[RMDB]
RNA sequence: GGGAACGACUCGAGUAGAGUCGAAAAAUCAGAGGGCGCUAUCAUGCAAACUAGGAUUGCCUGCUCAUGCACAGAACCAACUACCGAUAACUAACAGUGCAUGAAGGUUAGUUAUUCCAUAUUAAUUAAAACUCGUAAUUCUUCGGAAUUACGAGAACAUCUCACGGACGUUCGCGUCCGUGAGAUGAAAAGAAACAACAACAACAAC
Reactivity to 2A3 in 0.01 (KOAc 150mM, MgCl2 10mM, bicine 150mM(pH8.5), 24C), signal-to-noise 2, nucleotides 027 to 156: a000u020c010a000g000a000g000g030g000c030g000c120u160a170u300c100a020u300g030c000a030a050a040c000u010a000g030g020a010u050u020g070c010c010u040g040c010u000c010a000u000g000c000a020c010a020g030a110a090c080c000a060a060c110u190a150c020c100g070a030u030a030a000c020u050a010a000c010a000g000u000g030c000a010u020g020a020a000g000g010u010u000a010g000u010u000a020u060u070c040c000a070u090a060u290u150a150a150u100u110a080a110a060a110c030u000c000g000u000a000a010u000u000c000u000u060c120g110g000a000a000u000u000a000c000g000a000g010a000a010